[RMDB]
RNA sequence: GGGAACGACUCGAGUAGAGUCGAAAAGGCUGUGUGCGGGCAGGCUUGUGCUCCCCUUGGAGAAGGGCUGCUACUUAACAAGGAAGUCCUGGCCACAGGAGUCCCCUACUGGCUGCAGAGGACGAAGCCUCUAUUCUACAUUCGUGUAGAAUAGAGGAAAAGAAACAACAACAACAAC
Reactivity to 2A3 in 0.01 (KOAc 150mM, MgCl2 10mM, bicine 150mM(pH8.5), 24C), signal-to-noise 9, nucleotides 027 to 126: g060g010c030u030g010u020g040u080g080c040g010g010g020c020a020g080g070c010u050u060g060u090g030c010u030c010c000c000c010u030u100g090g060a130g040a060a040g020g020g010c020u010g030c000u050a090c060u130u140a110a060c060a080a040g060g030a100a030g040u060c000c000u020g090g010c010c010a030c010a020g000g020a030g040u060c010c000c000c000u040a060c030u030g060g000c010u050g010c040a030g010a060g110g030a020c020g040a040a010g040
Reactivity to DMS in 0.01 (KOAc 150mM, MgCl2 10mM, bicine 150mM(pH8.5), 24C), signal-to-noise 7, nucleotides 027 to 126: g010g000c020u010g010u010g010u030g010c070g010g000g000c060a080g010g020c030u010u010g020u010g010c060u010c220c010c030c050u000u010g010g020a150g020a100a060g010g010g030c090u000g010c050u020a070c120u020u030a080a140c130a050a090g010g000a140a090g010u010c020c000u010g010g010c020c060a050c100a020g000g000a130g000u000c050c010c010c030u010a090c090u010g000g000c020u010g020c070a070g000a080g000g010a040c040g010a130a120g000
An RNA of 177 nucleotides, treated with 2A3 and DMS and read out base by base. For 2A3 the reverse transcriptase was SuperScript II with manganese. It was measured as part of the RMDB library OK1LIB. The RNA was probed in 150 mM KOAc, 10 mM MgCl2 and 150 mM bicine (pH 8.5) at 24 C. Values cover nucleotides 27 to 126. DMS adducts were read by reverse transcription with MarathonRT.